[RMDB]
RNA sequence: GGGAACGACUCGAGUAGAGUCGAAAAACGGGCUGCCCGUGUCCUGGUCAUUGGUAGUGCAGGCAGAGGAAAUGCGGGAAAGGUUGCUGUGUUUGGAGGGUCCACAUCUUCACCCUCCUGUCCCAGGAGUCAGGUGGUAUUUCGAUACCACCUGACUAAAAGAAACAACAACAACAAC
Reactivity to 2A3 in 0.01 (KOAc 150mM, MgCl2 10mM, bicine 150mM(pH8.5), 24C), signal-to-noise 1, nucleotides 027 to 126: a010c000g000g030g020c000u030g010c000c000c000g000u010g030u020c020c020u020g060g030u140c020a080u060u130g080g040u110a040g040u040g090c010a000g000g000c000a030g050a070g120g010a040a040a050u220g000c040g000g060g000a040a150a090g160g000u080u060g040c020u020g020u020g000u160u080u090g000g000a000g000g000g000u070c080c060a120c030a180u060c060u140u080c020a000c010c000c000u000c000c000u010g010u000c030c000c000a070g000g110
Reactivity to DMS in 0.01 (KOAc 150mM, MgCl2 10mM, bicine 150mM(pH8.5), 24C), signal-to-noise 3, nucleotides 027 to 126: a050c030g010g040g020c020u000g020c020c010c000g020u000g060u000c000c020u000g010g030u040c040a060u040u020g010g000u000a050g020u000g010c030a130g010g010c030a080g010a100g020g010a040a120a090u020g000c050g000g010g010a100a080a080g010g020u000u000g000c030u000g020u010g000u010u000u000g030g010a030g000g010g020u000c140c090a070c090a080u000c080u000u000c090a090c010c010c010u000c000c010u010g010u000c010c000c000a190g010g020
The record gives the reactivity of an RNA of 177 nucleotides to 2A3 and DMS. The RNA was probed in 150 mM KOAc, 10 mM MgCl2 and 150 mM bicine (pH 8.5) at 24 C. Values are in units of 0.01, from 0 to 300, in steps of 10. For 2A3, 907 sequencing reads were counted. Values cover nucleotides 27 to 126.